[RMDB]
RNA sequence: GGGAACGACUCGAGUAGAGUCGAAAACUAUAGACUUCGGUCUAUAGAACUCAUCCUAAGUCCCCUCCGCAAGUCCGAUAAGUAUCGGAAACGAUACUUUUGACGGAUGAUGACCGGAGGCGGAUAUGGACUAUUUGAGAUGUUUCGACAUCUCAAACGCUCUUAGAACGUUCGCGUUCUAAGAGCGAAAAGAAACAACAACAACAAC
Reactivity to 2A3 in 0.01 (KOAc 150mM, MgCl2 10mM, bicine 150mM(pH8.5), 24C), signal-to-noise 1, nucleotides 027 to 156: c010u000a000u000a010g020a010c010u010u020c300g100g000u010c000u000a000u000a000g010a030a060c010u000c050a160u120c000c010u060a180a030g080u000c000c000c000c000u000c020c000g030c050a120a150g020u000c010c000g020a030u010a080a030g000u000a000u000c000g020g000a000a020a010c000g030a020u010a000c000u040u050u050u050g210a160c020g000g010a010u010g030a060u050g050a060c000c120g000g000a000g000g000c190g000g000a000u010a040u030g020g000a020c030u160a150u210u030u010g000a000g010a000u000g040u000u080u140c230g050a030c010a010u000c000u000c000a000a010a010
Structure probing data (2A3) for a 207-nucleotide construct. Reactivities are given for positions 27 through 156. The RNA was probed in 150 mM KOAc, 10 mM MgCl2 and 150 mM bicine (pH 8.5) at 24 C.